[RMDB]
RNA sequence: GGGAACGACUCGAGUAGAGUCGAAAAACGCUUCACAAUGCGCGGCAAAGAAACAUUGUUUAUGCAAAGGCACUUCGCAAUGUGUGCUCAAACAUUGCUUAUUCAAACACGCUUCACAAUGUGCGACAAAACUUCACGGUCUUCGGACCGUGAAGAAGGAAUGUGUUGAGUUCGCUCAACACAUUCCAAAAGAAACAACAACAACAAC
Reactivity to 2A3 in 0.01 (KOAc 150mM, MgCl2 10mM, bicine 150mM(pH8.5), 24C), signal-to-noise 5, nucleotides 027 to 156: a000c030g010c030u110u080c050a030c030a080a110u100g020c020g000c010g070g040c100a140a080a010g100a050a090a010c010a010u020u020g050u060u150u160a140u170g060c060a080a080a100g180g000c000a010c030u030u040c020g000c010a020a020u020g000u000g020u020g000c060u100c180a060a070a000c010a000u010u000g000c000u050u100a170u090u150c070a020a070a040c050a010c090g040c010u080u100c040a010c040a050a110u100g040u050g020c030g040a040c100a010a070a020a020c000u000u010c000a000c000g000g020u000c000u020u060c080g110g000a000c000c000g000u000g000a000a000g000a000a010
Reactivity to DMS in 0.01 (KOAc 150mM, MgCl2 10mM, bicine 150mM(pH8.5), 24C), signal-to-noise 1, nucleotides 027 to 156: a010c060g040c010u000u000c150a030c010a070a040u020g010c020g030c060g040g020c060a050a110a080g040a130a000a070c040a040u010u010g040u000u010u000a130u020g000c000a010a120a110g010g070c000a020c010u000u010c150g000c030a090a090u000g130u000g000u000g010c050u000c060a130a130a040c010a020u000u000g020c060u000u000a090u000u000c080a060a180a100c070a040c070g010c050u040u000c130a090c120a010a020u000g020u010g000c020g000a220c080a040a040a070a040c000u000u000c000a000c000g020g010u000c000u010u010c300g040g000a010c000c000g120u000g020a010a010g000a050a060
Chemical mapping of a 207-nucleotide RNA with 2A3 and DMS. For 2A3, 4,493 sequencing reads were counted. DMS adducts were read by reverse transcription with MarathonRT. For DMS, 1,829 sequencing reads were counted. Conditions: 150 mM KOAc, 10 mM MgCl2 and 150 mM bicine (pH 8.5), 24 C. For 2A3 the reverse transcriptase was SuperScript II with manganese. It was measured as part of the RMDB library M2RFPK.